[RMDB]
RNA sequence: GGGAACGACUCGAGUAGAGUCGAAAAAAAUUACCCACAUGGAGUCAGCAGAAAAUGAGAAAGUAGAGCUCGUGCUGCGAAUAAUUCCAGCAAGUGCCAAGGGGCUAGUUGAGGAAUGGCUUCAUGACAGUAUAUCAUUCUUCGGAAUGAUAUACUGAAAAGAAACAACAACAACAAC
Reactivity to DMS in 0.01 (KOAc 150mM, MgCl2 10mM, bicine 150mM(pH8.5), 24C), signal-to-noise 5, nucleotides 027 to 126: a060a060a130u010u010a120c010c000c010a300c020a020u000g010g000a010g020u000c010a110g010c040a040g010a050a040a090a020u000g010a030g000a070a060a110g020u000a160g010a170g020c020u010c010g020u000g010c000u000g000c030g000a050a110u000a090a080u000u000c010c000a070g020c030a050a060g010u000g010c020c020a180a110g020g010g000g010c030u000a060g000u000u000g000a200g010g010a040a040u000g010g000c010u000u000c010a010u000g000a210
Reactivity to 2A3 in 0.01 (KOAc 150mM, MgCl2 10mM, bicine 150mM(pH8.5), 24C), signal-to-noise 5, nucleotides 027 to 126: a000a000a020u090u050a090c000c000c000a000c000a000u010g010g000a010g020u020c020a020g020c020a020g050a090a190a040a040u060g000a030g030a070a200a060g140u150a060g050a040g100c000u000c020g020u050g040c000u010g000c010g000a020a020u230a080a050u060u000c010c000a010g040c010a080a050g070u040g100c020c040a220a170g270g080g040g000c000u040a020g090u050u070g080a050g020g020a030a030u020g000g000c000u010u020c000a000u010g030a010